This 177-nucleotide RNA was probed chemically with DMS. It was measured as part of the RMDB library TTRINS. The reactions ran in a buffer of 150 mM KOAc, 10 mM MgCl2 and 150 mM bicine (pH 8.5), at 24 C.
RNA sequence: GGGAACGACUCGAGUAGAGUCGAAAAGAUAUGGAUUAUGUCACGAUAAUAGGUGCUUUUGACGGGAAAGGGUUCGGAAACGAACUACUCCCGAUAAGCACUAUUAUCGUGACAUAAUCCUAAGUCACAUCCUCUAAGGGUUCGCCCUUAGAGGAUGAAAAGAAACAACAACAACAAC
Reactivity to DMS in 0.01 (KOAc 150mM, MgCl2 10mM, bicine 150mM(pH8.5), 24C), signal-to-noise 2, nucleotides 027 to 126: g020a050u000a300u020g000g000a000u000u000a000u000g000u000c010a010c010g020a000u000a010a000u000a020g010g010u000g020c010u000u000u010u000g020a300c160g000g000g050a040a040a050g000g000g000u000u010c000g000g000a110a060a300c000g000a000a000c000u000a030c020u000c000c010c000g020a060u010a010a000g010c010a000c000u010a000u000u000a000u000c000g000u000g000a000c000a000u000a000a000u000c000c010u010a000a050g010u000c040a230